[RMDB]
Structure probing data (2A3 and DMS) for a 177-nucleotide construct. The data come from the RNA Mapping Database (RMDB), library TTRDEL.
RNA sequence: GGGAACGACUCGAGUAGAGUCGAAAAGAUAUGGAGGGAGCUCUGACCCAGCUAUCGGUCGGAAACGACCGAAUAAUGCUGCAGAGCGAAGAACUCCUAAGUCAAAACCAUGUCUUCGGACAUGGAAUCUACUGUAUAUCUUCGGAUAUACAGUAGAAAAAGAAACAACAACAACAAC
Reactivity to 2A3 in 0.01 (KOAc 150mM, MgCl2 10mM, bicine 150mM(pH8.5), 24C), signal-to-noise 4, nucleotides 027 to 126: g020a010u060a030u170g000g000a010g000g000g030a040g010c000u000c010u020g120a170c090c080c030a000g010c010u030a030u070c010g000g000u000c020g010g020a070a050a060c010g000a000c000c000g000a010a000u060a010a020u130g000c000u010g030c000a010g000a000g000c020g080a140a010g000a020a010c010u000c000c000u010a120a020g040u030c030a020a010a070a140c000c000a000u010g000u000c010u040u070c280g130g000a000c000a000u000g000g010a010a100
Reactivity to DMS in 0.01 (KOAc 150mM, MgCl2 10mM, bicine 150mM(pH8.5), 24C), signal-to-noise 7, nucleotides 027 to 126: g000a060u000a300u010g000g000a020g010g000g000a100g010c000u000c000u000g010a250c240c250c060a010g010c010u000a070u000c000g010g000u000c000g000g010a090a090a160c000g010a010c000c000g000a010a020u000a060a080u000g010c000u000g000c010a010g000a010g010c000g010a080a110g000a130a150c000u000c000c010u000a030a100g010u010c040a100a070a130a200c010c000a000u000g000u000c000u000u020c240g020g000a000c000a000u000g000g010a050a050

As a SHAPE reagent, 2A3 marks flexible, mostly unpaired nucleotides at the ribose 2'-OH.